[RMDB]
RNA sequence: GGGAACGACUCGAGUAGAGUCGAAAAGAGCGUCGAGAGACGAAGAGAAGUGCACCGAUCAGCAACGGGGAACGUAAUGGUGCACAAGAGUAAGUCAGUGUAACGUUCUCAGGGCACUGGAGGCAGAAGCACGUCGAUAGUUCGCUAUCGACGUGCUAAAAGAAACAACAACAACAAC
Reactivity to DMS in 0.01 (KOAc 150mM, MgCl2 10mM, bicine 150mM(pH8.5), 24C), signal-to-noise 1, nucleotides 027 to 126: g010a060g010c010g000u020c050g000a110g120a170g000a000c000g000a110a200g010a190g000a230a090g000u000g000c000a050c080c050g060a210u020c270a180g000c300a040a060c000g000g000g000g000a200a110c030g040u000a140a140u030g000g020u010g020c020a010c060a030a050g020a070g010u000a060a110g000u040c000a140g000u000g030u020a010a140c160g000u040u000c000u000c000a110g000g000g000c050a020c080u000g000g000a020g000g050c150a030g020a220
Reactivity to 2A3 in 0.01 (KOAc 150mM, MgCl2 10mM, bicine 150mM(pH8.5), 24C), signal-to-noise 2, nucleotides 027 to 126: g120a020g010c000g060u000c060g000a000g000a000g000a140c020g030a050a010g050a000g080a300a040g010u010g010c000a060c000c010g130a150u210c020a040g060c030a080a090c000g030g080g010g050a040a100c030g000u020a140a060u230g000g080u000g060c000a000c040a000a040g070a000g000u160a180a000g000u040c040a030g010u000g020u120a030a000c010g000u070u060c020u000c000a000g040g010g000c040a000c050u040g040g000a060g180g000c000a000g060a150